RNA sequence: GGGAACGACUCGAGUAGAGUCGAAAACACGGGAGGCGCAGCUGCUGCAUGACGCUUUAACGUCGCAGCUCACCACCGCCUGACCAUUCUGCCAGGAGACAACGGUUGCCCACUCUUUAAUCAUUGUCUUCAAUGUGAUGUUCGCAUCACAUUGAAGAAAAGAAACAACAACAACAAC
Reactivity to DMS in 0.01 (KOAc 150mM, MgCl2 10mM, bicine 150mM(pH8.5), 24C), signal-to-noise 2, nucleotides 027 to 126: c160a190c060g000g010g000a060g000g030c070g010c100a050g000c120u060g030c020u030g000c100a170u000g020a000c020g020c080u040u000u000a150a140c010g040u000c000g020c010a020g000c000u000c050a050c040c060a070c140c030g010c030c000u000g030a100c020c050a150u000u000c070u010g020c020c040a100g000g000a050g000a020c030a030a010c040g010g000u000u010g000c040c060c040a080c080u000c030u000u000u000a050a060u000c050a100u000u000g000u000
Reactivity to 2A3 in 0.01 (KOAc 150mM, MgCl2 10mM, bicine 150mM(pH8.5), 24C), signal-to-noise 2, nucleotides 027 to 126: c080a030c040g000g020g000a070g040g000c020g000c030a010g000c040u030g010c010u010g000c030a150u200g000a000c000g030c000u170u130u210a170a010c010g000u000c030g000c000a000g000c000u030c010a060c020c010a010c000c000g050c000c000u060g040a140c010c010a050u100u020c030u050g040c040c010a060g000g040a050g020a020c050a040a000c040g010g040u050u090g040c030c000c010a040c030u100c030u100u200u170a130a060u110c060a080u040u220g050u090
This 177-nucleotide RNA was probed chemically with DMS and 2A3.
The RNA was probed in 150 mM KOAc, 10 mM MgCl2 and 150 mM bicine (pH 8.5) at 24 C.
Values are in units of 0.01, from 0 to 300, in steps of 10.
For DMS, 1,146 sequencing reads were counted.
For 2A3, 2,503 sequencing reads were counted.